[RMDB]
RNA sequence: GGGAACGACUCGAGUAGAGUCGAAAACAGUUUAAUCUCUGAAAGUGUUCCAUAGGAACACAACAUUGAUUAAUCUUAUUUUUGGUCUCCGUGGCAGGGCCCCUGUGCUUGCGCAUGCCUUGCCACAACCCUCCUGGGUAUUCGUACCCAGGAGGGUAAAAGAAACAACAACAACAAC
Reactivity to 2A3 in 0.01 (KOAc 150mM, MgCl2 10mM, bicine 150mM(pH8.5), 24C), signal-to-noise 6, nucleotides 027 to 126: c020a000g010u000u000u000a000a000u010c000u000c000u010g030a110a110a050g020u000g000u000u000c010c010a130u130a170g040g000a000a000c000a000c000a010a020c000a000u000u000g000a000u000u010a000a000u010c040u070u070a180u120u130u010u070u110g120g010u030c030u010c060c070g000u000g000g000c010a000g000g000g000c000c000c000c010u010g000u010g010c050u160u160g030c010g000c010a010u210g000c000c000u010u000g000c000c000a000c000a010
Reactivity to DMS in 0.01 (KOAc 150mM, MgCl2 10mM, bicine 150mM(pH8.5), 24C), signal-to-noise 1, nucleotides 027 to 126: c300a050g010u010u010u010a010a000u010c000u030c000u000g010a030a120a040g000u000g010u000u000c000c000a190u030a180g000g000a000a000c010a000c000a020a300c010a000u000u000g000a000u000u010a000a000u000c000u000u030a230u000u000u000u000u000g000g020u000c010u030c010c210g000u030g000g010c010a000g010g010g000c000c000c040c000u000g000u050g010c070u000u010g020c020g030c000a000u030g000c010c000u010u000g000c000c010a000c000a030